RNA sequence: GGGAACGACUCGAGUAGAGUCGAAAAGAUAUGGACCUUGGGCGUGCUACCACGAAUUCGGAAACGAACUAUGGUAGAACUACACGCCAAGGUCCUAAGUCAAAACCCCUUGCUUCGGCAAGGGGAACUCAAGAGAGGACUUCGGUCCUCUCUUGAGAAAAGAAACAACAACAACAAC
Reactivity to DMS in 0.01 (KOAc 150mM, MgCl2 10mM, bicine 150mM(pH8.5), 24C), signal-to-noise 1, nucleotides 027 to 126: g000a020u000a300u000g000g010a020c000c000u010u000g020g040g000c000g020u000g000c030u000a040c010c000a030c100g000a030a080u000u000c010g010g010a070a120a170c030g000a010a010c090u010a110u000g020g000u000a020g000a040a010c180u010a290c010a000c030g020c000c000a000a000g000g060u010c000c000u000a000a020g000u000c040a060a040a090a170c020c000c000c000u000u000g010c000u000u000c270g020g030c020a010a010g000g010g000g000a010a010
Reactivity to 2A3 in 0.01 (KOAc 150mM, MgCl2 10mM, bicine 150mM(pH8.5), 24C), signal-to-noise 2, nucleotides 027 to 126: g000a030u030a030u070g020g000a010c000c000u040u030g300g140g140c010g010u030g040c000u000a000c000c060a050c090g300a250a300u050u040c020g020g040a020a030a060c010g020a030a020c040u070a120u070g020g000u000a010g030a000a020c040u120a030c060a000c020g000c000c010a000a000g000g000u000c010c000u000a000a000g000u010c010a010a070a080a080c010c000c010c020u010u020g020c010u110u100c300g130g000c000a010a000g020g030g010g000a010a010